This 207-nucleotide RNA was probed chemically with 2A3. The RNA was probed in 150 mM KOAc, 10 mM MgCl2 and 150 mM bicine (pH 8.5) at 24 C. Reactivities are rounded to 0.1 and cut off at 0 and 3. 2A3 adducts were read by reverse transcription with SuperScript II with manganese.
RNA sequence: GGGAACGACUCGAGUAGAGUCGAAAAGCCUAAAACGAUCCUUCCUGGCAUCGCCCGUGUGGCAGAUUGAAGGGUCUCAAAUUAAGCGGGCUAUGCUACGAUCCUCCGCCUGGGGAUUUGUAGAUGAAUCUAAUCAGGCUAGCUCCAUGAAAGCCUGGACCGCAUAAGUGUUCGCACUUAUGCGGUCAAAAGAAACAACAACAACAAC
Reactivity to 2A3 in 0.01 (KOAc 150mM, MgCl2 10mM, bicine 150mM(pH8.5), 24C), signal-to-noise 1, nucleotides 027 to 156: g060c020c020u120a120a080a010a010c110g010a030u010c000c010u000u000c010c040u020g100g100c000a040u060c020g040c020c000c000g040u090g020u080g040g090c010a010g040a080u190u260g040a020a000g030g000g010u000c020u030c000a140a180a090u210u300a070a000g060c100g040g000g000c000u000a020u040g030c000u000a000c000g000a000u000c000c040u010c010c010g070c100c120u180g000g000g050g000a000u100u040u300g000u040a010g010a030u000g010a050a070u130c100u180a060a060u070c000a000g000g030c000u000a010g000c000u070c030c060a070u070g070a100a200a000g000c040c000u000g020